This 207-nucleotide RNA was probed chemically with 2A3. The RNA was probed in 150 mM KOAc, 10 mM MgCl2 and 150 mM bicine (pH 8.5) at 24 C. Values cover nucleotides 27 to 156. For 2A3, 1,536 sequencing reads were counted. 2A3 adducts were read by reverse transcription with SuperScript II with manganese. It was measured as part of the RMDB library M2RFPK.
[RMDB]
RNA sequence: GGGAACGACUCGAGUAGAGUCGAAAAGUCUCCUAGAGAGCUUGGCCGUCGGGCCUUACACCCCGACUUGCUGAGUCUCUCUAGGAGAGUCCCUUUCCCAGCCAGAGGUGGCUGGUCAAACAAUACCAAAACUCUUGCUAGUUCGCUAGCAAGAGAAGAUAACGAUGUUGUUCGCAACAUCGUUAUCAAAAGAAACAACAACAACAAC
Reactivity to 2A3 in 0.01 (KOAc 150mM, MgCl2 10mM, bicine 150mM(pH8.5), 24C), signal-to-noise 1, nucleotides 027 to 156: g020u000c000u000c010c010u000a000g000a000g000a000g020c000u000u020g040g000c000c050g020u000c010g000g010g020c020c010u050u060a100c110a080c010c000c000c000g010a020c000u050u280g010c020u010g010a000g020u020c000u000c000u000c000u010a000g000g000a000g000a000g000u030c000c000c000u040u050u030c010c000c000a010g000c020c000a000g000a010g010g020u000g000g000c000u070g040g040u150c050a000a000a020c050a050a020u010a010c000c000a020a010a060a110c000u000c000u000u000g000c010u000a010g010u100u050c180g020c110u010a000g000c000a000a000g000a010g000a000a000